An RNA of 177 nucleotides, treated with DMS and 2A3 and read out base by base. The RNA was probed in 150 mM KOAc, 10 mM MgCl2 and 150 mM bicine (pH 8.5) at 24 C. For 2A3, 1,772 sequencing reads were counted. Values cover nucleotides 27 to 126. The DMS profile rests on 2,190 reads.
RNA sequence: GGGAACGACUCGAGUAGAGUCGAAAACAACUAGAUCCUCUACACACUCCGGAAAGUGCGAGGCGCAGCUGUAGAGGGUGUCGCACACGAGCUGCACCGCGCGCGGCGGCUCCACCGCCCACUGCUGAAAUAUGAGCUCCUUCGGGAGCUCAUAUUUAAAAGAAACAACAACAACAAC
Reactivity to DMS in 0.01 (KOAc 150mM, MgCl2 10mM, bicine 150mM(pH8.5), 24C), signal-to-noise 2, nucleotides 027 to 126: c080a070a080c190u040a160g000a030u020c000c000u000c000u020a050c030a050c150a110c040u000c030c050g030g000a060a100a070g000u010g000c000g010a020g020g020c040g020c050a060g000c060u000g030u010a030g020a030g040g000g020u000g020u000c020g000c080a090c110a080c110g000a020g000c030u000g000c000a080c010c000g040c030g010c040g020c060g000g000c020g000g000c080u020c060c090a090c000c030g000c010c000c040a030c100u000g040c110u040g000
Reactivity to 2A3 in 0.01 (KOAc 150mM, MgCl2 10mM, bicine 150mM(pH8.5), 24C), signal-to-noise 3, nucleotides 027 to 126: c030a000a050c030u110a040g000a090u010c010c000u000c020u030a000c010a010c010a000c060u110c060c070g130g080a210a140a040g140u110g060c010g010a020g000g000c060g000c030a010g000c020u070g020u080a010g010a030g090g040g010u050g010u020c090g020c040a060c010a030c100g080a000g000c020u010g000c000a020c030c010g020c000g000c000g010c020g030g000c010g020g020c000u010c000c010a030c000c010g040c000c010c000a040c000u090g010c030u090g020